Chemical mapping of a 177-nucleotide RNA with 2A3 and DMS. The data come from the RNA Mapping Database (RMDB), library OK2TST. For 2A3 the reverse transcriptase was SuperScript II with manganese. The reactions ran in a buffer of 150 mM KOAc, 10 mM MgCl2 and 150 mM bicine (pH 8.5), at 24 C. DMS adducts were read by reverse transcription with MarathonRT. For 2A3, 929 sequencing reads were counted.
RNA sequence: GGGAACGACUCGAGUAGAGUCGAAAACAACGUAUCCCAUUAGCCCGUGCUCUUUAUUGGGAUGCGCUCGUCGAUCACUAUAUUCCGGCUGAGCAAAUAGAGGCCACAGCUGAAGUGCUACGAUGGCCGUUCACCUCCACUUCGGUGGAGGUGAACGAAAAGAAACAACAACAACAAC
Reactivity to 2A3 in 0.01 (KOAc 150mM, MgCl2 10mM, bicine 150mM(pH8.5), 24C), signal-to-noise 1, nucleotides 027 to 126: c060a000a030c040g020u020a000u000c000c000c000a000u020u070a010g050c040c030c090g050u070g080c000u040c010u140u300u140a160u060u050g020g020g000a010u020g000c000g010c040u080c040g040u010c030g030a130u020c040a050c200u100a080u070a080u300u140c150c020g070g000c000u090g050a030g030c030a000a000a190u220a040g130a110g070g000c000c010a130c000a060g000c000u050g060a130a010g040u000g050c010u060a070c030g020a070u020g020g090c000
Reactivity to DMS in 0.01 (KOAc 150mM, MgCl2 10mM, bicine 150mM(pH8.5), 24C), signal-to-noise 1, nucleotides 027 to 126: c040a060a090c050g030u000a010u000c010c000c000a060u000u010a150g000c060c070c070g000u010g000c070u000c140u020u010u000a110u020u000g000g010g010a040u000g010c000g010c040u010c090g030u000c050g000a090u000c040a050c090u020a080u000a180u020u000c080c010g020g010c020u020g000a300g010c000a060a100a110u020a060g010a150g040g020c010c010a030c110a050g000c010u000g000a160a060g040u000g010c040u000a050c070g030a100u010g010g030c000